[RMDB]
RNA sequence: GGGAACGACUCGAGUAGAGUCGAAAACUUAUUUAGCAUACUGCCCAAUGCUCACUAAAUCAUAAUAGCUGUUUUUAACAUUUGGUGAAGAAUCUAUUUAACAGGAGUGAGUUGAGGGGCAUAGGAGCACUCUGUAAAAGUUCGCUUUUACAGAGUGAAAAGAAACAACAACAACAAC
Reactivity to 2A3 in 0.01 (KOAc 150mM, MgCl2 10mM, bicine 150mM(pH8.5), 24C), signal-to-noise 7, nucleotides 027 to 126: c030u120u130a100u260u270u190a060g010c030a060u070a200c020u040g010c030c010c000a010a030u040g000c000u010c000a010c010u060a070a100a160u130c060a100u070a220a040u030a100g020c060u050g140u040u020u010u030u070a090a050c040a090u160u120u300g160g000u060g030a050a020g010a030a020u010c020u030a050u050u090u040a040a030c030a040g150g020a020g060u000g000a010g010u000u010g020a030g010g000g040g000c000a010u030a020g020g000a020g050
Reactivity to DMS in 0.01 (KOAc 150mM, MgCl2 10mM, bicine 150mM(pH8.5), 24C), signal-to-noise 7, nucleotides 027 to 126: c030u000u010a100u010u010u000a120g010c060a110u000a100c150u000g010c000c010c010a060a270u010g000c000u000c020a010c010u000a050a100a100u010c140a110u010a040a030u000a040g010c300u010g010u010u000u000u000u000a060a090c030a210u010u010u010g030g020u000g000a070a080g000a040a040u000c020u000a020u000u000u000a070a120c250a090g000g000a050g020u000g000a020g010u000u000g010a300g010g000g000g010c010a030u000a050g000g010a110g020
Chemical mapping of a 177-nucleotide RNA with 2A3 and DMS. Reactivities are given for positions 27 through 126. The RNA was probed in 150 mM KOAc, 10 mM MgCl2 and 150 mM bicine (pH 8.5) at 24 C.